This 177-nucleotide RNA was probed chemically with 2A3 and DMS. Conditions: 150 mM KOAc, 10 mM MgCl2 and 150 mM bicine (pH 8.5), 24 C.
RNA sequence: GGGAACGACUCGAGUAGAGUCGAAAAGCUGCAGCUCCAGUCUGGUGCUUUUUCCAUCUGCCAAAGAAACAGUCCAGAAUGCUGUGGCUUCCUCUGCCUAUCAGAGGCAGUGCAGCUGCCUGGGGACAGACUUCACCUUUUUCGAAAGGUGAAGUCUAAAAGAAACAACAACAACAAC
Reactivity to 2A3 in 0.01 (KOAc 150mM, MgCl2 10mM, bicine 150mM(pH8.5), 24C), signal-to-noise 4, nucleotides 027 to 126: g030c030u120g030c000a000g000c000u070c070c020a070g140u040c020u000g110g000u080g040c010u050u000u000u000u000c040c020a080u040c080u160g130c040c070a120a150a020g050a040a100a020c030a010g030u020c000c000a010g050a050a040u060g010c000u000g010u020g050g000c000u000u000c000c000u010c020u010g030c010c050u220a210u300c060a040g000a020g090g000c000a000g000u010g040c000a000g000c000u020g000c000c000u000g010g010g020g020a000c040
Reactivity to DMS in 0.01 (KOAc 150mM, MgCl2 10mM, bicine 150mM(pH8.5), 24C), signal-to-noise 2, nucleotides 027 to 126: g020c010u010g020c010a040g050c020u020c130c150a110g030u040c000u010g010g010u020g010c010u000u000u000u000u010c010c040a140u000c090u010g010c120c140a060a140a110g020a020a050a060c040a050g010u000c010c010a020g000a070a140u040g000c000u020g010u000g000g010c000u010u000c020c010u000c020u000g000c190c100u060a160u030c140a140g000a040g000g000c040a010g030u020g000c050a040g000c010u000g020c300c010u000g040g000g010g010a060c210
Values are in units of 0.01, from 0 to 300, in steps of 10. DMS adducts were read by reverse transcription with MarathonRT.